[RMDB]
RNA sequence: GGGAACGACUCGAGUAGAGUCGAAAAGAUAUUUCGCAUGAUAAUCUGUUGAUCUGGACACACUCUCCCUCUCGGGGCCAGAGAAAAAUCACAGCUUCAUUGUGUGGAGGAAGGACAGGUGACCCUGUGCCUGCGUCAUAUUCGUAUGACGCAGGCAAAAAGAAACAACAACAACAAC
Reactivity to 2A3 in 0.01 (KOAc 150mM, MgCl2 10mM, bicine 150mM(pH8.5), 24C), signal-to-noise 1, nucleotides 027 to 126: g020a000u050a100u110u030u060c000g000c050a000u090g020a000u040a070a000u040c010u000g040u010u120g010a000u050c010u010g070g040a020c000a000c000a040c180u070c000u070c000c040c010u160c030u080c090g020g010g020g000c020c000a010g000a000g000a020a020a000a000a000u040c010a010c000a050g000c030u100u020c120a130u050u000g000u000g010u070g060g050a000g060g070a160a000g010g000a030c030a000g000g030u010g020a050c000c140c010u020g000